This 207-nucleotide RNA was probed chemically with 2A3. 2A3 is a SHAPE reagent: it acylates the 2'-hydroxyl of flexible nucleotides of all four kinds. For 2A3, 385 sequencing reads were counted. The reactions ran in a buffer of 150 mM KOAc, 10 mM MgCl2 and 150 mM bicine (pH 8.5), at 24 C.

[RMDB]
RNA sequence: GGGAACGACUCGAGUAGAGUCGAAAAUACAUUUUACACCGUAUGAUACAAUUCAGCGAUGCAGUUACAAGGUUAGCUCAUUAUUGUGUUUUAGGUGAUCUACUCACAAAAGCCAAUAAAAAUAAAUUAUAUAAAGGCACGAUUAAUGGAACACCUCCUUUAAUCUUGUCUUCGGACAAGAUUAAAGAAAAGAAACAACAACAACAAC
Reactivity to 2A3 in 0.01 (KOAc 150mM, MgCl2 10mM, bicine 150mM(pH8.5), 24C), signal-to-noise 1, nucleotides 027 to 156: u080a000c030a040u080u150u140u080a010c070a050c030c020g070u110a150u180g010a020u050a030c000a000a040u010u080c030a060g040c050g000a010u060g040c000a000g040u090u090a050c020a150a040g130g050u050u040a010g050c000u000c020a000u010u120a000u030u050g010u010g060u050u030u030u160a000g020g070u010g000a000u040c020u110a070c020u000c000a010c020a080a260a100a020g000c010c010a030a030u150a270a100a050a030a020u190a010a140a030u300u140a300u040a180u120a260a100a060g000g040c010a020c020g000a020u030u270a070a010u100g010g060a060a000c010a000c170c000u020c010